[RMDB]
RNA sequence: GGGAACGACUCGAGUAGAGUCGAAAAGAUAUGGACCAUUACGUGCUGAUACUAAUUGCCGAAGAACUUUAUCGGAAACGAUAAAGGGAGGCAAUUAGUAUCAGACCCACGCGGAUGGUCCUAAGUCGGUUAGUAAUCACUUCGGUGAUUACUAACCAAAAGAAACAACAACAACAAC
Reactivity to DMS in 0.01 (KOAc 150mM, MgCl2 10mM, bicine 150mM(pH8.5), 24C), signal-to-noise 1, nucleotides 027 to 126: g000a100u020a300u000g000g030a010c000c010a000u000u000a120c020g060u000g000c000u000g000a020u000a020c000u000a030a020u000u000g020c000c000g010a150a190g020a170a180c000u050u000u000a010u010c000g000g000a170a090a160c000g000a000u000a010a000a020g000g000g020a060g010g010c000a010a000u000u000a000g000u000a000u000c000a010g000a170c170c290c100a160c000g020c020g040g040a000u000g030g000u000c000c000u000a020a120g030u010c170
About this RNA: The record gives the reactivity of an RNA of 177 nucleotides to DMS. The data come from the RNA Mapping Database (RMDB), library TTRINS. Conditions: 150 mM KOAc, 10 mM MgCl2 and 150 mM bicine (pH 8.5), 24 C.